[RMDB]
Structure probing data (DMS and 2A3) for a 177-nucleotide construct. For DMS, 6,035 sequencing reads were counted. The data come from the RNA Mapping Database (RMDB), library OK2TST. The 2A3 profile rests on 3,355 reads. Values cover nucleotides 27 to 126. For DMS the reverse transcriptase was MarathonRT. For 2A3 the reverse transcriptase was SuperScript II with manganese. The reactions ran in a buffer of 150 mM KOAc, 10 mM MgCl2 and 150 mM bicine (pH 8.5), at 24 C.
RNA sequence: GGGAACGACUCGAGUAGAGUCGAAAACUGGGGAUACAGAUCCGCUACGAGACGGGCGCCACCGAGCUCAUCGUGGACGGGACCGGCAAGGUAACCGGGGUGAUGUGGAAGCGGUUCUCCGAAACCGCUCGUGAACUACGUUCGCGUAGUUCACGAGAAAAGAAACAACAACAACAAC
Reactivity to DMS in 0.01 (KOAc 150mM, MgCl2 10mM, bicine 150mM(pH8.5), 24C), signal-to-noise 5, nucleotides 027 to 126: c060u000g010g000g010g020a190u000a090c140a070g000a100u010c020c010g020c030u000a070c050g000a060g020a090c140g010g000g000c050g000c090c080a070c150c090g000a110g000c030u000c030a110u000c050g020u010g000g010a110c050g020g000g000a070c050c030g010g020c110a080a080g010g000u010a090a110c030c030g000g010g010g010u000g000a110u010g020u010g020g010a100a070g000c010g000g010u000u000c060u000c130c120g000a080a030a030c020c020g010
Reactivity to 2A3 in 0.01 (KOAc 150mM, MgCl2 10mM, bicine 150mM(pH8.5), 24C), signal-to-noise 2, nucleotides 027 to 126: c020u000g000g000g020g030a030u060a110c030a070g090a100u010c010c000g020c030u040a020c060g030a010g010a070c090g030g000g030c040g020c040c040a090c040c050g010a020g020c010u010c030a070u030c030g050u060g000g040a060c020g020g040g000a020c010c000g030g060c050a140a040g080g040u090a060a090c010c010g020g010g010g020u090g020a100u090g050u080g070g020a050a000g010c010g010g010u030u000c100u000c040c030g020a010a010a000c000c000g030